[RMDB]
RNA sequence: GGGAACGACUCGAGUAGAGUCGAAAAGUUCGCAUGGUGCACUAUUGUGUUAUUAGUAACUAUGUAAGCUUACAAUCGAAAAUGUUUAACCAUAAAAGGGUAAAAUGGUGUAAGACAGUCUGAUACUUUACGGCUUCACGUUUCGACGUGAAGCCAACAGUAGUGAGGGUUUCGACCCUCACUACUGAAAAGAAACAACAACAACAAC
Reactivity to DMS in 0.01 (KOAc 150mM, MgCl2 10mM, bicine 150mM(pH8.5), 24C), signal-to-noise 2, nucleotides 027 to 156: g020u000u000c000g000c020a050u000g010g010u000g000c150a020c010u000a010u010u030g030u010g050u000u000a070u000u000a050g040u000a110a030c010u020a030u010g010u000a030a040g000c000u010u020a060c070a090a130u000c050g000a120a080a100a070u010g040u000u000u000a090a060c010c010a090u000a060a050a110a180g010g000g030u000a020a020a080a060u000g020g010u010g030u010a080a060g010a050c020a090g050u000c040u000g000a150u000a080c050u000u000u000a140c140g010g000c000u010u000c000a010c030g000u000u000u000c300g020a050c000g060u000g000a020a010g010c010c000a000a000
Reactivity to 2A3 in 0.01 (KOAc 150mM, MgCl2 10mM, bicine 150mM(pH8.5), 24C), signal-to-noise 5, nucleotides 027 to 156: g030u060u050c040g000c010a000u010g010g020u050g030c100a010c040u070a090u130u200g090u060g050u190u030a080u040u010a020g050u020a020a020c010u010a010u010g000u020a030a030g000c010u050u100a080c080a070a160u090c060g100a110a050a020a020u030g010u040u070u070a010a010c010c000a000u120a110a170a040a040g050g060g000u050a040a030a040a040u060g000g050u040g060u080a070a000g030a010c000a010g040u070c050u060g050a040u080a300c070u050u090u050a080c130g000g000c000u000u000c000a000c000g010u020u090u110c210g090a040c000g000u000g000a000a000g020c000c000a000a000